The data come from the RNA Mapping Database (RMDB), library OK1LIB. Structure probing data (DMS and 2A3) for a 177-nucleotide construct.
[RMDB]
RNA sequence: GGGAACGACUCGAGUAGAGUCGAAAACGACAAGUCGGCGCUGGUGCGGCUCACGGACAGCCCUGACAUGGAAAUCUGGUCGAACCGGAUCGAACGCGGCCUGGUACACAUCACGGGCGUGACACGCGUCGAUUCCGAGAUUCGUCUCGGAAUCGACAAAAGAAACAACAACAACAAC
Reactivity to DMS in 0.01 (KOAc 150mM, MgCl2 10mM, bicine 150mM(pH8.5), 24C), signal-to-noise 1, nucleotides 027 to 126: c160g000a090c140a060a000g000u030c070g000g000c070g030c020u000g000g000u000g030c030g020g000c000u020c030a130c050g010g000a200c170a030g000c030c030c050u000g110a090c300a020u080g000g000a220a120a000u000c030u000g000g000u000c030g040a070a200c040c020g000g000a000u000c020g030a040a060c120g020c020g000g000c000c000u000g020g070u010a050c060a230c060a000u020c130a040c140g000g000g050c060g000u000g020a050c020a120c090g000c010
Reactivity to 2A3 in 0.01 (KOAc 150mM, MgCl2 10mM, bicine 150mM(pH8.5), 24C), signal-to-noise 2, nucleotides 027 to 126: c050g100a000c040a060a020g090u020c000g000g030c000g000c010u080g080g020u090g000c000g040g000c030u060c070a040c020g010g050a050c000a000g000c000c010c010u040g050a010c020a110u110g020g030a120a040a020u080c000u010g040g050u010c020g030a080a050c060c000g040g000a030u030c040g020a150a060c020g000c010g040g060c030c000u060g050g000u070a040c080a000c000a080u060c070a070c030g010g010g040c050g020u030g040a000c090a040c090g060c040